[RMDB]
RNA sequence: GGGAACGACUCGAGUAGAGUCGAAAAAGAUGCCAUGCCGACCCGAAGAGGAAAGAAGGACGCGAGACGGUGAACCUGUGAGUGGAAACCCGCUUUAUUCACUGGGGUCGACAACUCUGGGGAGAGACUUAACUCAAGUGUUCGCACUUGAGUUAAGAAAAGAAACAACAACAACAAC
Reactivity to DMS in 0.01 (KOAc 150mM, MgCl2 10mM, bicine 150mM(pH8.5), 24C), signal-to-noise 2, nucleotides 027 to 126: a090g010a130u000g000c050c040a140u010g000c030c040g030a100c050c010c040g020a130a080g010a080g010g010a020a050a090g000a070a030g000g010a100c060g010c050g010a120g020a120c050g020g020u000g000a010a090c090c030u000g020u010g010a020g000u000g000g000a070a080a090c060c020c020g000c080u000u000u010a090u000u020c120a060c050u000g010g010g000g020u010c020g020a070c140a030a040c060u000c030u010g000g000g000g000a080g010a080g010a140
Reactivity to 2A3 in 0.01 (KOAc 150mM, MgCl2 10mM, bicine 150mM(pH8.5), 24C), signal-to-noise 1, nucleotides 027 to 126: a000g050a060u160g000c000c030a070u090g000c000c030g030a020c000c010c020g030a110a020g060a030g040g060a130a000a060g090a030a020g010g040a040c040g030c000g050a070g030a010c020g040g000u060g050a030a100c030c000u050g030u090g150a080g030u040g000g000a190a020a040c010c000c020g020c060u160u190u050a160u090u050c050a040c150u090g000g020g000g000u050c030g020a020c010a100a130c000u020c020u040g040g000g050g000a060g010a000g000a000